An RNA of 177 nucleotides, treated with DMS and 2A3 and read out base by base.
[RMDB]
RNA sequence: GGGAACGACUCGAGUAGAGUCGAAAAGAAAGGCAGCCAGUGCAGCCCACGUAGCCAUUCGAGGCAUGCUUUUGCAUGCCGCCCACGACUGAGGGCAGCUGCGGCACUGAGGGCAGCUGCCGAAAGACGUAAUACUAGGAUUCGUCCUAGUAUUACGAAAAGAAACAACAACAACAAC
Reactivity to DMS in 0.01 (KOAc 150mM, MgCl2 10mM, bicine 150mM(pH8.5), 24C), signal-to-noise 9, nucleotides 027 to 126: g000a060a080a100g010g020c010a080g010c030c020a050g010u000g010c030a130g000c040c040c050a230c110g010u000a060g010c010c020a140u000u000c150g000a110g000g000c000a010u000g000c000u000u010u000u010g010c000a000u000g010c000c010g000c010c010c010a090c130g010a110c170u010g010a140g010g000g020c010a100g000c020u000g000c010g010g010c080a050c050u000g000a130g010g010g010c070a070g000c010u000g010c000c010g000a020a060a100g000a210
Reactivity to 2A3 in 0.01 (KOAc 150mM, MgCl2 10mM, bicine 150mM(pH8.5), 24C), signal-to-noise 9, nucleotides 027 to 126: g070a020a060a010g010g000c010a000g020c020c020a020g010u020g030c030a090g140c020c030c000a030c030g060u040a010g000c010c010a070u100u130c090g090a080g000g000c000a000u010g000c000u220u300u190u300g000c010a000u000g000c000c000g000c000c000c000a060c040g240a060c100u180g100a160g060g040g000c000a000g000c000u000g000c000g060g000c030a020c070u080g040a190g030g090g000c030a010g000c000u000g000c000c000g000a000a010a000g080a010
Description: For 2A3 the reverse transcriptase was SuperScript II with manganese. Conditions: 150 mM KOAc, 10 mM MgCl2 and 150 mM bicine (pH 8.5), 24 C. The DMS profile rests on 54,124 reads.